About this RNA
This 207-nucleotide RNA was probed chemically with 2A3 and DMS. The reactions ran in a buffer of 150 mM KOAc, 10 mM MgCl2 and 150 mM bicine (pH 8.5), at 24 C. For 2A3, 3,640 sequencing reads were counted. It was measured as part of the RMDB library OK3TST.
[RMDB]
RNA sequence: GGGAACGACUCGAGUAGAGUCGAAAACUAGGGAGAAGAGGAUGGUGCCUAGGUUUAGACUACUCACAGAAAAGAUGGUUAGGAGAGGCUGGAUCCUGUAAUGCUGAUAGAAUUUGUGGUCAACUUAGAUGGGGAAUGUGAGAGAAAAACAGGAGUAACCUCCUAAUUACUUCGGUAAUUAGGAGGUAAAAGAAACAACAACAACAAC
Reactivity to 2A3 in 0.01 (KOAc 150mM, MgCl2 10mM, bicine 150mM(pH8.5), 24C), signal-to-noise 5, nucleotides 027 to 156: c020u050a030g010g010g010a070g000a100a030g030a020g040g020a060u060g040g020u060g020c000c020u030a040g000g020u030u040u100a040g010a020c020u030a020c010u040c030a070c030a040g150a040a090a030a010g080a050u080g020g050u080u050a030g010g030a030g010a000g030g000c020u020g010g010a020u050c010c000u010g040u050a070a070u060g020c010u040g020a040u050a070g060a070a090u080u060u110g050u030g020g020u030c000a010a030c020u060u090a030g010a100u100g020g010g000g040a020a030u040g020u060g040a040g010a010g040a000a080a020a000a000c030a010g070g000a010g070u250a010
Reactivity to DMS in 0.01 (KOAc 150mM, MgCl2 10mM, bicine 150mM(pH8.5), 24C), signal-to-noise 2, nucleotides 027 to 156: c060u000a080g020g000g010a110g010a070a050g010a120g010g030a100u010g020g020u000g020c030c040u020a050g010g030u010u010u010a100g010a080c030u000a100c020u000c020a160c070a160g000a060a080a100a130g010a070u000g030g010u000u010a070g000g000a130g000a050g020g030c060u010g020g000a100u010c050c000u000g020u000a050a060u000g010c030u000g010a100u000a100g010a060a170u000u000u000g020u000g030g030u000c000a030a060c080u000u000a080g020a110u000g020g000g020g010a010a080u030g020u010g000a080g010a130g000a040a040a050a040a090c050a060g000g000a050g030u010a090